An RNA of 177 nucleotides, treated with 2A3 and DMS and read out base by base. The DMS profile rests on 2,900 reads. Source: RMDB library OK1LIB, as collected in RNAgym. For DMS the reverse transcriptase was MarathonRT.
RNA sequence: GGGAACGACUCGAGUAGAGUCGAAAAUCGAUGCCGGCCGAAUGUUCCGCGACGUGGAGGGCAUCGCGGCGUUGGAAUUGAUUGACGGUCGGGCCGCCGCGCUAACCCGUGAACAUCUUGGCGUUCGACUACCAGGUGUGUUCGCACACCUGGUAGUAAAAGAAACAACAACAACAAC
Reactivity to 2A3 in 0.01 (KOAc 150mM, MgCl2 10mM, bicine 150mM(pH8.5), 24C), signal-to-noise 4, nucleotides 027 to 126: u150c060g040a030u120g110c040c020g000g020c030c020g040a060a050u100g020u040u040c020c000g000c020g020a020c000g020u050g080g070a140g030g100g010c030a080u030c010g000c000g010g000c020g020u110u300g020g020a080a070u050u140g080a080u060u110g050a110c050g000g000u010c000g000g000g020c000c010g020c010c020g020c000g000c030u040a080a060c000c000c030g060u070g070a040a030c040a050u050c000u060u100g010g010c030g040u030u040c050g030
Reactivity to DMS in 0.01 (KOAc 150mM, MgCl2 10mM, bicine 150mM(pH8.5), 24C), signal-to-noise 2, nucleotides 027 to 126: u020c050g050a040u060g000c010c030g040g060c000c000g000a070a090u050g010u030u020c010c000g000c010g000a020c040g010u000g020g000a050g000g000g010c190a130u010c000g010c000g010g030c000g040u080u050g000g000a050a050u020u010g010a170u030u030g020a210c070g020g000u000c030g000g000g020c050c030g000c010c000g010c080g000c160u030a070a140c010c010c020g000u060g020a050a130c110a060u060c110u020u000g030g010c060g000u010u000c010g000